Conditions: 150 mM KOAc, 10 mM MgCl2 and 150 mM bicine (pH 8.5), 24 C. Chemical mapping of a 177-nucleotide RNA with DMS. It was measured as part of the RMDB library TTRINS. The DMS profile rests on 6,561 reads.
RNA sequence: GGGAACGACUCGAGUAGAGUCGAAAAGAUAUGGAAAACUGCCCUCGAAUCGUGGGACAUGAAUUGAUCAUGUCGGAAACGACAUGCGUAAUUCAACAGCCCAAUUCGAGGGCAGUUUUCCUAAGUCCAUCAAAGUACAGUUCGCUGUACUUUGAUGAAAAGAAACAACAACAACAAC
Reactivity to DMS in 0.01 (KOAc 150mM, MgCl2 10mM, bicine 150mM(pH8.5), 24C), signal-to-noise 5, nucleotides 027 to 126: g010a110u010a300u010g010g010a010a000a000a020c010u010g000c000c000c000u010c000g000a020a010u000c210g020u000g020g020g010a060c120a220u000g000a020a020u000u000g000a070u010c000a000u010g010u010c010g010g010a120a110a230c000g010a000c010a000u010g000c250g000u000a030a000u000u000c000a040a070c290a300g000c000c000c010a040a060u000u000c000g010a000g000g010g000c000a000g000u000u000u000u020c000c000u010a020a100g000u000c040